[RMDB]
RNA sequence: GGGAACGACUCGAGUAGAGUCGAAAAACGAUCGCGCUGGCUCCUUCGGGAGGCAAGGGCGCCAGCCAGCCGUGGAGUGCGGCCAGCACCCGGUCGGCGGGCAACAUCGCCAGCGCCGGCCCGCCGCGGUGGAUGAAAUAUUCGUAUUUCAUCCACCAAAAGAAACAACAACAACAAC
Reactivity to 2A3 in 0.01 (KOAc 150mM, MgCl2 10mM, bicine 150mM(pH8.5), 24C), signal-to-noise 7, nucleotides 027 to 126: a010c030g030a090u140c040g000c010g000c040u000g020g000c010u030c030c000u070u080c160g100g040g030a060g090g010c050a030a050g050g020g000c050g010c010c000a010g000c010c000a010g000c010c020g080u120g080g090a220g040u090g010c020g030g150c030c010a030g010c010a020c000c010c000g000g030u050c020g000g000c020g000g020g010c030a090a050c020a140u160c060g000c010c000a030g030c000g010c010c010g020g030c000c000c000g020c030c020g040c080
Reactivity to DMS in 0.01 (KOAc 150mM, MgCl2 10mM, bicine 150mM(pH8.5), 24C), signal-to-noise 9, nucleotides 027 to 126: a180c070g000a070u000c110g010c050g020c000u000g000g000c010u000c010c010u000u010c140g030g010g010a070g010g010c130a060a060g010g010g010c230g000c030c030a040g010c000c010a070g010c020c020g000u010g010g010a130g020u000g020c020g010g000c130c130a110g020c020a070c020c010c010g010g010u010c030g020g010c000g000g010g010c010a090a150c120a090u010c110g020c010c000a030g010c010g020c010c050g010g000c010c000c020g010c070c060g010c300
The record gives the reactivity of an RNA of 177 nucleotides to 2A3 and DMS.
DMS adducts were read by reverse transcription with MarathonRT.
Reactivities are given for positions 27 through 126.
It was measured as part of the RMDB library OK2TRN.
The RNA was probed in 150 mM KOAc, 10 mM MgCl2 and 150 mM bicine (pH 8.5) at 24 C.
The DMS profile rests on 17,164 reads.
Reactivities are rounded to 0.1 and cut off at 0 and 3.
For 2A3 the reverse transcriptase was SuperScript II with manganese.